[RMDB]
RNA sequence: GGGAACGACUCGAGUAGAGUCGAAAACUAUGUACAGACAGUACAGUGGAUAAGGUCUGUAGAUAUCCAACUAUAACAAUGGUACUUGCAGUGGUAUCUAUCAAGAUAGGCAGGCUAUCAUAGAAAGAAGUUAUGUAUUAUUCGUAGUACGUAACUUAAAAGAAACAACAACAACAAC
Reactivity to 2A3 in 0.01 (KOAc 150mM, MgCl2 10mM, bicine 150mM(pH8.5), 24C), signal-to-noise 9, nucleotides 027 to 126: c020u010a020u060g100u010a010c000a030g040a010c010a030g080u100a040c010a080g110u160g130g050a170u050a120a040g070g000u000c000u010g000u010a010g030a040u020a020u030c020c020a040a080c070u130a070u050a230a070c110a110a060u050g020g000u020a010c000u010u040g020c030a070g050u070g220g040u070a010u000c010u020a150u110c070a070a020g010a040u010a010g050g010c020a010g020g000c020u010a010u030c010a010u020a040g140a040a110a000g120
Reactivity to DMS in 0.01 (KOAc 150mM, MgCl2 10mM, bicine 150mM(pH8.5), 24C), signal-to-noise 9, nucleotides 027 to 126: c210u000a020u010g010u000a010c010a020g000a040c050a060g010u010a020c050a270g030u030g010g010a130u010a050a040g000g000u000c000u000g000u000a010g000a020u000a020u010c030c040a100a110c160u020a080u030a090a100c160a070a040u000g000g000u000a040c030u010u010g000c040a120g020u040g010g020u000a010u000c010u010a090u060c250a080a040g000a020u000a020g000g010c020a030g000g010c190u000a010u000c010a020u000a080g010a100a090a070g010

The data come from the RNA Mapping Database (RMDB), library OK1LIB. Chemical mapping of a 177-nucleotide RNA with 2A3 and DMS. Reactivities are given for positions 27 through 126. The RNA was probed in 150 mM KOAc, 10 mM MgCl2 and 150 mM bicine (pH 8.5) at 24 C. 2A3 adducts were read by reverse transcription with SuperScript II with manganese.